[RMDB]
RNA sequence: GGGAACGACUCGAGUAGAGUCGAAAACAUAGGUGCAUCUCUCUGGCCAGGGAGUCUUCAGACACCGUUCGCAAGAAGGCUGGCCAAAGUCACACUUGACCUUUCUGUUGCGACACGGCAAACAAGCCAGCGUCCUACGCUUUCUCUUUUUCCGAGACGUUUUAUACCAGUUCGCUGGUAUAAAACGAAAAGAAACAACAACAACAAC
Reactivity to 2A3 in 0.01 (KOAc 150mM, MgCl2 10mM, bicine 150mM(pH8.5), 24C), signal-to-noise 4, nucleotides 027 to 156: c050a040u150a050g020g020u060g010c050a100u030c030u020c000u010c030u060g050g010c040c030a030g030g020g020a070g040u030c060u100u100c030a050g020a070c050a040c100c030g020u070u030c030g010c030a050a040g090a040a010g100g000c020u040g010g010c000c040a050a050a010g080u110c060a030c010a030c160u040u080g060a150c010c000u040u140u020c050u090g150u120u040g000c020g010a020c010a000c110g020g000c030a030a090a090c030a120a000g020c010c030a010g000c010g050u090c020c030u070a050c040g020c030u020u100u030c010u010c000u080u130u010u040u020c070c040g020a060g020a070
Reactivity to DMS in 0.01 (KOAc 150mM, MgCl2 10mM, bicine 150mM(pH8.5), 24C), signal-to-noise 1, nucleotides 027 to 156: c060a140u010a000g000g000u010g020c040a130u020c020u010c000u000c050u010g000g020c050c040a080g040g000g030a120g040u010c040u000u040c110a130g010a080c050a060c030c000g020u000u000c020g040c050a030a190g000a180a060g000g020c040u000g010g010c010c020a010a020a100g000u020c120a120c130a130c040u010u000g030a050c050c000u010u000u000c020u010g030u000u000g010c010g030a020c120a050c030g020g080c040a080a090a100c070a110a120g030c010c010a070g020c020g000u010c040c010u000a070c020g000c040u010u000u000c030u010c030u000u000u000u030u020c000c010g000a180g020a290

Chemical mapping of a 207-nucleotide RNA with 2A3 and DMS. It was measured as part of the RMDB library OK3TST. 2A3 is a SHAPE reagent: it acylates the 2'-hydroxyl of flexible nucleotides of all four kinds. Conditions: 150 mM KOAc, 10 mM MgCl2 and 150 mM bicine (pH 8.5), 24 C.